[RMDB]
RNA sequence: GGGAACGACUCGAGUAGAGUCGAAAAGACCCUUUAUGGAACUGUCAUUCAACCCCAAAAAUCUAGUGCAAACAUUGUCUUAAUUACUUAGGCUAAAAGAAAUAAGUAUUAAAGCGGGACAAGGCAUAACAGCAGCUACGCUUCGGCGUAGCUGCAAGUAGAUCUAUUUCUUCGGAAAUAGAUCUACAAAAGAAACAACAACAACAAC
Reactivity to 2A3 in 0.01 (KOAc 150mM, MgCl2 10mM, bicine 150mM(pH8.5), 24C), signal-to-noise 1, nucleotides 027 to 156: g030a000c000c010c000u030u160u040a100u100g020g000a080a070c120u110g060u020c010a020u210u150c070a230a150c040c030c020c060a000a160a070a090a030u100c160u220a100g030u040g030c020a100a110a100c000a050u010u000g000u000c000u040u150a220a130u100u050a110c030u020u070a000g030g100c050u250a150a130a040a080g010a000a150a000u050a020a050g000u000a020u040u190a210a090a060g110c080g040g000g000a000c040a000a050g000g000c010a030u070a220a090c030a050g000c000a000g000c000u010a010c020g000c010u020u050c210g080g010c000g020u000a000g000c000u000g000c000a000a000